This 177-nucleotide RNA was probed chemically with 2A3.
The 2A3 profile rests on 510 reads.
Values cover nucleotides 27 to 126.
It was measured as part of the RMDB library RFM100.

RNA sequence: GGGAACGACUCGAGUAGAGUCGAAAAAUACCUUCGAUAUUAAUUAAUCAUCUCUUAAUUAUUUCGAGUAUACCCCAUAAUAUACUAACGAAGGUGAAAUUUUGACUCCCUUUAGUAGUGGCCUGUAACGUUCAUCUGGUUUCGACCAGAUGAACGUAAAAGAAACAACAACAACAAC
Reactivity to 2A3 in 0.01 (KOAc 150mM, MgCl2 10mM, bicine 150mM(pH8.5), 24C), signal-to-noise 1, nucleotides 027 to 126: a000u120a070c020c000u000u000c010g020a030u030a050u230u090a030a030u100u030a030a030u100c030a150u010c040u040c030u150u100a060a000u030u060a070u140u030u070c050g010a000g000u000a000u030a050c000c000c110c000a010u070a230a030u080a090u050a050c030u040a000a160c030g010a000a000g000g000u030g040a030a070a090u010u010u000u060g010a010c020u050c020c000c040u000u020u020a020g030u000a030g010u030g060g230c030c030u040g040u150a010

The RNA was probed in 150 mM KOAc, 10 mM MgCl2 and 150 mM bicine (pH 8.5) at 24 C.